[RMDB]
RNA sequence: GGGAACGACUCGAGUAGAGUCGAAAAUGGAGCUUUACUGCAACCUGAUAUGGAAUGUUUGUACCGCUUGUACAGGAUAGGUAGGAGCCGAAGAGACGUGUGCGCUAGCAUACGAGGAGGCAAUGGUGGGAUACUACCCUGGCUGUAUGACCAUUCUACUUGAAUAAUACUUCGGUAUUAUUCAAGUAAAAGAAACAACAACAACAAC
Reactivity to 2A3 in 0.01 (KOAc 150mM, MgCl2 10mM, bicine 150mM(pH8.5), 24C), signal-to-noise 7, nucleotides 027 to 156: u090g030g010a060g040c040u140u120u160a120c120u120g020c050a100a170c010c010u080g060a100u080a110u270g040g010a030a020u030g020u040u050u020g020u030a020c010c020g010c030u020u040g010u000a020c010a020g010g030a030u030a020g000g020u010a010g000g040a070g010c000c010g050a130a020g010a000g010a020c000g000u010g000u010g000c020g010c110u120a020g000c000a000u010a010c000g010a020g010g020a010g000g000c000a010a020u030g000g010u030g000g010g000a010u020a050c000u020a010c010c000c000u010g020g000c000u000g010u030a030u030g020a030c020c000a010u010u020c010u020
Reactivity to DMS in 0.01 (KOAc 150mM, MgCl2 10mM, bicine 150mM(pH8.5), 24C), signal-to-noise 3, nucleotides 027 to 156: u000g020g010a300g020c030u000u000u010a090c070u000g000c010a050a110c030c020u000g020a180u000a100u010g030g000a100a100u000g010u000u000u000g000u010a080c020c060g020c050u000u000g030u010a110c060a040g020g040a150u000a020g000g010u010a050g010g030a130g030c010c020g000a100a140g020a230g010a090c030g030u010g000u000g020c000g010c180u000a150g020c020a040u000a020c010g000a120g010g020a170g000g020c040a050a060u000g000g000u000g020g000g010a210u000a050c030u000a040c010c010c020u010g000g020c030u000g010u010a040u010g010a100c040c000a170u000u000c020u010

An RNA of 207 nucleotides, treated with 2A3 and DMS and read out base by base. The DMS profile rests on 6,090 reads. For DMS the reverse transcriptase was MarathonRT. The reactions ran in a buffer of 150 mM KOAc, 10 mM MgCl2 and 150 mM bicine (pH 8.5), at 24 C.